This 177-nucleotide RNA was probed chemically with DMS and 2A3. Source: RMDB library OK2TRN, as collected in RNAgym. For 2A3, 2,219 sequencing reads were counted. Conditions: 150 mM KOAc, 10 mM MgCl2 and 150 mM bicine (pH 8.5), 24 C.

RNA sequence: GGGAACGACUCGAGUAGAGUCGAAAAAUAAUGAGCCCGACUCGUUGCUCAAUCCACCACGUCACAACGGCGGAGAUGCGGCUAGAGUCGCUCAAAUGGUUUGCCGCCAAAUGGGUCGCCGCAUCGACGCUGACCGACGUUUCGACGUCGGUCAGCGAAAAGAAACAACAACAACAAC
Reactivity to DMS in 0.01 (KOAc 150mM, MgCl2 10mM, bicine 150mM(pH8.5), 24C), signal-to-noise 2, nucleotides 027 to 126: a110u030a110a110u010g010a100g000c020c070c040g000a060c040u000c010g010u000u000g050c010u000c010a070a080u000c050c020a100c080c060a120c060g020u010c150a110c210a120a100c130g000g000c050g000g010a100g000a010u000g010c000g010g010c010u000a070g000a070g010u020c040g000c000u000c000a000a010a220u000g010g000u000u000u030g000c180c210g000c000c000a000a020a300u000g000g010g020u000c070g010c000c000g010c000a010u000c010g000a130
Reactivity to 2A3 in 0.01 (KOAc 150mM, MgCl2 10mM, bicine 150mM(pH8.5), 24C), signal-to-noise 2, nucleotides 027 to 126: a000u270a000a230u050g010a020g020c000c010c010g060a060c010u000c020g200u210u260g010c010u000c040a030a090u040c000c020a040c020c010a040c040g050u000c030a060c020a300a110c190g050g030c020g000g020a130g000a030u000g010c000g000g000c010u030a050g010a000g150u060c030g000c000u020c000a010a010a020u010g000g070u070u070u150g120c080c040g000c030c000a000a000a020u010g010g040g010u050c030g000c020c000g030c000a000u020c020g030a040